[RMDB]
RNA sequence: GGGAACGACUCGAGUAGAGUCGAAAAGUUUACGCUCCAAGCUCGGUGGAUAGCAGCCCUAUCAAUAUCUAGGAGAACUGUGCUAUGUUUAGAAGAUUAGGUAGUCUCUAAACAGAACAAUUUACCUCAUACGUUAGGACGUUCGCGUCCUAACGAACUCAUUGUAAUGCUUCGGCAUUACAAUGAGAAAAGAAACAACAACAACAAC
Reactivity to 2A3 in 0.01 (KOAc 150mM, MgCl2 10mM, bicine 150mM(pH8.5), 24C), signal-to-noise 7, nucleotides 027 to 156: g030u050u080u100a090c080g020c030u000c020c010a080a020g010c010u040c070g080g010u050g040g020a050u050a070g010c040a020g000c020c000c010u070a070u100c070a110a130u090a070u220c080u090a040g040g030a060g050a080a040c040u040g020u030g050c030u040a020u070g010u000u000u010a060g010a280a010g000a030u040u040a020g010g040u020a010g010u000c000u000c000u000a000a010a000c010a020g030a040a020c080a030a020u050u050u060a020c010c010u070c050a090u100a150c030g000u000u000a000g000g000a010c000g010u040u040c190g010c010g050u010c000c000u000a000a000c000g000a000a000
Reactivity to DMS in 0.01 (KOAc 150mM, MgCl2 10mM, bicine 150mM(pH8.5), 24C), signal-to-noise 2, nucleotides 027 to 156: g030u010u000u010a130c100g000c040u000c030c030a060a140g030c050u000c050g010g060u010g020g030a110u010a080g040c040a090g040c070c050c040u010a190u000c050a080a100u000a090u000c080u000a110g010g040a300g020a030a030c030u000g050u000g020c010u000a140u000g010u000u000u000a010g000a070a090g000a020u000u010a170g030g030u000a140g020u000c020u000c000u000a000a010a010c010a010g020a060a010c030a010a050u000u010u000a150c010c000u010c060a090u010a140c020g020u000u000a010g000g010a020c000g010u000u000c280g020c060g040u000c010c020u000a000a010c000g000a030a060